[RMDB]
RNA sequence: GGGAACGACUCGAGUAGAGUCGAAAAUGCUUGCAAAUAUCGGCACGGGAAUAUUUACAGGAUGCGGUUCAGCAGGGACAUUCUCUUAUAGCUUCAGGGCGUGUAAAAAUCUUCUUGUCUUGCCUGCUGAUAUGUUUACGGAUGUUCCGGGCGGCGCCGAAAACAGACAAUUCGUUGUCUGUUUUCGAAAAGAAACAACAACAACAAC
Reactivity to DMS in 0.01 (KOAc 150mM, MgCl2 10mM, bicine 150mM(pH8.5), 24C), signal-to-noise 3, nucleotides 027 to 156: u000g000c030u000u000g000c030a030a060a080u000a050u000c020g040g000c020a070c060g010g000g020a090a050u000a040u000u000u000a110c050a090g010g000a100u000g000c040g010g020u000u000c030a070g020c010a060g020g060g010a050c030a050u010u000c030u010c050u000u000a080u010a130g010c050u000u010c090a130g020g010g020c050g020u000g010u000a030a050a030a080a060u000c080u000u000c070u010u000g020u000c020u000u010g000c130c010u000g020c010u010g010a060u000a050u000g020u000u000u000a170c090g010g020a140u000g010u000u010c010c000g010g010g010c030g010g010c000g030c070
Reactivity to 2A3 in 0.01 (KOAc 150mM, MgCl2 10mM, bicine 150mM(pH8.5), 24C), signal-to-noise 3, nucleotides 027 to 156: u090g010c000u070u100g010c020a030a060a080u130a070u100c070g030g000c040a030c050g060g000g020a060a040u070a090u120u130u120a130c040a040g020g040a050u060g040c020g000g030u040u070c020a010g000c030a010g010g000g010a010c010a030u090u010c040u000c000u040u080a110u050a180g050c010u070u080c030a010g030g040g000c040g030u060g030u090a010a080a020a060a110u070c070u170u040c030u060u110g030u020c030u020u120g100c010c010u000g000c000u010g010a010u010a010u060g030u020u080u090a030c040g010g010a010u030g000u050u010c010c000g010g000g000c030g020g000c020g010c030
An RNA of 207 nucleotides, treated with DMS and 2A3 and read out base by base.
The RNA was probed in 150 mM KOAc, 10 mM MgCl2 and 150 mM bicine (pH 8.5) at 24 C.
It was measured as part of the RMDB library OK3TST.
The 2A3 profile rests on 5,360 reads.